[RMDB]
RNA sequence: GGGAACGACUCGAGUAGAGUCGAAAAACGUGAGGUUCUCUAUAUAUCCGCACCGUCGUAAACUAGUGCGCCACUGUUGAGACUACCUUCCUAGUAUAAGGCGGACAUUGUGCGGGGCGAAGCGCCGGAGCUCGCUAGAUUUCGAUCUAGCGAGCUCAAAAGAAACAACAACAACAAC
Reactivity to 2A3 in 0.01 (KOAc 150mM, MgCl2 10mM, bicine 150mM(pH8.5), 24C), signal-to-noise 2, nucleotides 027 to 126: a000c070g020u100g040a020g000g030u140u010c000u000c000u000a020u000a030u000a000u150c020c000g000c020a000c010c000g050u000c030g080u130a000a000a090c050u030a050g020u050g050c060g030c010c020a040c070u050g140u230u120g080a010g010a040c010u000a050c010c000u020u070c000c000u020a060g000u050a230u050a070a020g020g000c000g000g040a010c080a050u170u100g030u040g030c020g040g000g000g000c020g040a050a010g040c000g000c030c010g000
Reactivity to DMS in 0.01 (KOAc 150mM, MgCl2 10mM, bicine 150mM(pH8.5), 24C), signal-to-noise 1, nucleotides 027 to 126: a070c170g050u030g000a080g030g030u030u000c010u010c040u000a030u060a050u010a040u060c030c020g020c000a030c030c040g000u020c040g030u000a080a130a060c160u000a030g000u020g020c050g000c030c030a060c150u000g070u000u080g000a060g000a110c100u000a060c030c070u000u000c000c000u010a000g020u000a100u000a100a060g010g000c040g020g040a050c130a110u010u060g000u000g010c040g000g010g000g000c030g040a040a060g040c190g040c100c010g000